[RMDB]
An RNA of 207 nucleotides, treated with DMS and 2A3 and read out base by base. The RNA was probed in 150 mM KOAc, 10 mM MgCl2 and 150 mM bicine (pH 8.5) at 24 C. Source: RMDB library OK3TST, as collected in RNAgym. For 2A3, 969 sequencing reads were counted. Values cover nucleotides 27 to 156.
RNA sequence: GGGAACGACUCGAGUAGAGUCGAAAAGGCCAUCGUUUUUUCCAGACCAUUUUCGAUGGCCAUAGGUCUGGAUUAUAGUUCAAUCGCCGAGAGGCGUACAGUUAGAGUAGCGAGCUCGAAGCACGCGACCGGUAAGAGCUCGCGAAGGUCGCGGAGAGAUAUAAUUAGCUUUCGAGCUAAUUAUAUCAAAAGAAACAACAACAACAAC
Reactivity to DMS in 0.01 (KOAc 150mM, MgCl2 10mM, bicine 150mM(pH8.5), 24C), signal-to-noise 1, nucleotides 027 to 156: g020g030c030c030a030u000c010g000u000u000u010u000u000u000c010c020a060g000a050c010c010a210u000u000u000u000c020g040a020u000g000g000c000c000a020u000a030g010g020u000c000u000g020g000a090u010u000a110u000a110g000u030u020c010a140a130u000c040g040c030c010g000a260g000a280g000g000c010g000u000a010c080a090g040u010u010a090g010a170g020u000a250g040c030g000a050g010c010u000c050g000a160a170g000c010a080c000g030c040g030a000c020c010g030g080u000a100a250g010a070g000c020u010c000g010c010g000a010a130g050g000u000c010g070c050g000g010a300g040a240
Reactivity to 2A3 in 0.01 (KOAc 150mM, MgCl2 10mM, bicine 150mM(pH8.5), 24C), signal-to-noise 2, nucleotides 027 to 156: g010g000c000c000a030u010c070g120u060u080u190u120u020u030c020c020a030g020a030c010c040a140u030u030u100u230c040g000a030u040g000g010c000c000a020u070a010g000g000u000c030u010g020g000a030u070u130a060u080a030g070u050u080c040a060a070u040c070g000c000c000g010a030g000a020g060g000c010g000u000a010c000a010g000u050u090a010g010a010g120u070a020g010c010g010a000g010c010u020c030g050a140a050g030c040a040c080g050c050g060a090c050c080g060g000u030a040a010g000a000g000c010u000c000g010c000g000a000a000g000g010u040c000g000c020g030g050a040g000a010